[RMDB]
RNA sequence: GGGAACGACUCGAGUAGAGUCGAAAAAGGCGAACAACGAAGAGUGUGAAGACACACGACUCAACUGCAGGCUUGCAGCCGAUACGAGCAAGCUGUAAGAGCAUAAUUGAGAAUGCACAGCGUUCGCAAAUAUUUAUUAAUUCGUUAAUAAAUAUUUAAAAGAAACAACAACAACAAC
Reactivity to DMS in 0.01 (KOAc 150mM, MgCl2 10mM, bicine 150mM(pH8.5), 24C), signal-to-noise 9, nucleotides 027 to 126: a090g010g010c000g010a010a010c010a090a300c150g000a100a110g010a190g010u000g020u000g000a250a130g010a180c040a010c010a070c020g010a180c020u000c000a020a030c080u010g000c020a130g020g010c000u000u000g010c010a040g000c040c050g000a140u040a070c190g010a120g020c100a220a100g000c000u000g010u010a030a020g010a090g000c010a030u010a100a160u010u000g000a020g010a140a060u020g010c130a100c050a070g010c280g000u000u000c010g010c010
Reactivity to 2A3 in 0.01 (KOAc 150mM, MgCl2 10mM, bicine 150mM(pH8.5), 24C), signal-to-noise 9, nucleotides 027 to 126: a010g090g000c010g000a010a000c020a020a020c090g120a090a060g090a080g060u010g000u020g070a180a060g180a050c020a000c000a000c030g070a040c000u000c010a020a020c020u010g010c010a060g190g180c000u000u000g010c000a010g010c010c050g070a070u130a190c110g020a070g060c060a060a010g000c000u010g010u020a030a020g010a010g040c020a020u050a100a050u120u040g000a020g020a100a100u130g060c070a030c020a100g060c050g030u000u000c000g000c000
Chemical mapping of a 177-nucleotide RNA with DMS and 2A3. For 2A3 the reverse transcriptase was SuperScript II with manganese. For DMS, 28,029 sequencing reads were counted. The 2A3 profile rests on 9,306 reads. The reactions ran in a buffer of 150 mM KOAc, 10 mM MgCl2 and 150 mM bicine (pH 8.5), at 24 C. Source: RMDB library OK1LIB, as collected in RNAgym.